[RMDB]
The data come from the RNA Mapping Database (RMDB), library TTRDEL. Structure probing data (DMS and 2A3) for a 177-nucleotide construct. For DMS, 2,769 sequencing reads were counted. For 2A3, 2,418 sequencing reads were counted. Conditions: 150 mM KOAc, 10 mM MgCl2 and 150 mM bicine (pH 8.5), 24 C. High DMS reactivity at an A or C suggests that its Watson-Crick edge is free.
RNA sequence: GGGAACGACUCGAGUAGAGUCGAAAAGAUAUGGAUCCGUAGUCAUACCGAGCUGUUUCGGAAACGAACAGCGUUUGACGUAUGGGAUCGAAGGAUCCUAAGUCGAGGCCGCUCUUCGGAGCGGCAACGUUACUCACAGCUUCGGCUGUGAGUAACGAAAAGAAACAACAACAACAAC
Reactivity to DMS in 0.01 (KOAc 150mM, MgCl2 10mM, bicine 150mM(pH8.5), 24C), signal-to-noise 3, nucleotides 027 to 126: g000a030u000a150u010g000g010a030u000c000c000g020u000a240g010u000c020a010u000a020c020c020g010a230g010c000u000g000u000u000u020c010g030g010a030a020a050c010g010a010a020c000a010g000c010g000u000u010u000g010a180c300g010u000a010u000g000g010g000a070u020c160g010a110a170g020g000a010u000c000c000u000a010a080g010u000c000g000a120g000g010c010c010g000c000u000c000u000u020c200g010g000a010g030c000g010g000c010a000a000
Reactivity to 2A3 in 0.01 (KOAc 150mM, MgCl2 10mM, bicine 150mM(pH8.5), 24C), signal-to-noise 2, nucleotides 027 to 126: g000a000u090a020u110g010g000a000u000c010c050g100u170a040g220u100c000a000u010a010c000c040g060a030g070c010u020g070u280u200u130c010g040g000a010a040a000c010g000a000a000c000a000g040c010g000u140u060u210g040a020c030g030u010a000u030g050g100g000a110u230c110g000a080a040g010g000a010u000c040c000u010a110a030g030u000c000g020a080g200g000c000c000g020c010u030c000u060u130c300g140g000a030g000c000g020g000c000a020a000